[RMDB]
Structure probing data (2A3 and DMS) for a 177-nucleotide construct.
RNA sequence: GGGAACGACUCGAGUAGAGUCGAAAAGUGCGCCGGUGUCGUCACCGCGUCCACAUCCUGAUGCUGCUGUCCGAAAUAAUGCUACUGCUCCAGCUGGUGCACUGGAUCGACUGCCAGCUGUGGCAAAACGAUGAUAAUUAUUCGUAAUUAUCAUCGUAAAAGAAACAACAACAACAAC
Reactivity to 2A3 in 0.01 (KOAc 150mM, MgCl2 10mM, bicine 150mM(pH8.5), 24C), signal-to-noise 9, nucleotides 027 to 126: g020u030g010c050g000c040c050g020g020u060g050u170c140g160u160c020a010c030c010g020c020g030u030c020c000a030c000a030u020c000c010u050g020a080u110g010c030u010g000c010u030g020u030c010c020g060a070a060a060u210a070a060u140g050c030u060a100c070u050g000c000u000c010c000a010g000c000u010g000g010u040g010c060a040c120u090g040g040a070u090c050g090a070c030u060g000c000c000a000g000c010u010g010u030g000g000c000a010a050a020
Reactivity to DMS in 0.01 (KOAc 150mM, MgCl2 10mM, bicine 150mM(pH8.5), 24C), signal-to-noise 9, nucleotides 027 to 126: g020u000g010c190g030c030c020g020g020u000g010u010c200g010u000c030a040c020c020g010c140g010u000c070c020a030c040a090u000c020c010u000g010a090u010g010c020u000g010c020u000g010u000c020c030g010a070a090a090u010a080a080u010g010c070u010a100c140u000g010c010u000c140c010a020g000c000u000g000g010u000g010c090a110c150u000g010g010a120u010c090g010a130c080u000g000c010c010a020g000c010u000g000u000g010g010c020a040a040a100
Values cover nucleotides 27 to 126. The reactions ran in a buffer of 150 mM KOAc, 10 mM MgCl2 and 150 mM bicine (pH 8.5), at 24 C. The DMS profile rests on 105,098 reads.